[RMDB]
RNA sequence: GGGAACGACUCGAGUAGAGUCGAAAAGCACUGCGAGAGUUACGUAGGGUUGCUGACUACAAGGAUAAGCAAUCGACUGCUGCAGGCAUAUGCGAAGCACGUCAGUUUGGGUUCGACGGAGUCUACAACUCAAGCAACUACUCAGGAAGCGGUCAACGGAGCAGAAUGUUUUCGAACAUUCUGCUCCAAAAGAAACAACAACAACAAC
Reactivity to 2A3 in 0.01 (KOAc 150mM, MgCl2 10mM, bicine 150mM(pH8.5), 24C), signal-to-noise 1, nucleotides 027 to 156: g020c000a040c050u030g020c030g040a180g000a000g050u010u110a050c080g040u120a160g070g000g000u040u000g000c050u040g050a000c000u120a020c120a050a010g030g000a030u100a250a000g040c000a030a000u020c020g030a000c000u000g100c030u000g000c010a070g140g000c010a140u110a080u200g000c000g080a030a000g000c010a070c100g000u010c010a130g000u040u080u000g100g040g010u010u100c110g040a080c110g100g010a000g000u080c000u040a010c020a000a000c010u050c030a060a000g000c010a000a130c010u110a030c000u000c000a000g030g040a040a040g030c000g000g070u000c000a000a020c130
Conditions: 150 mM KOAc, 10 mM MgCl2 and 150 mM bicine (pH 8.5), 24 C. Structure probing data (2A3) for a 207-nucleotide construct. The 2A3 profile rests on 513 reads.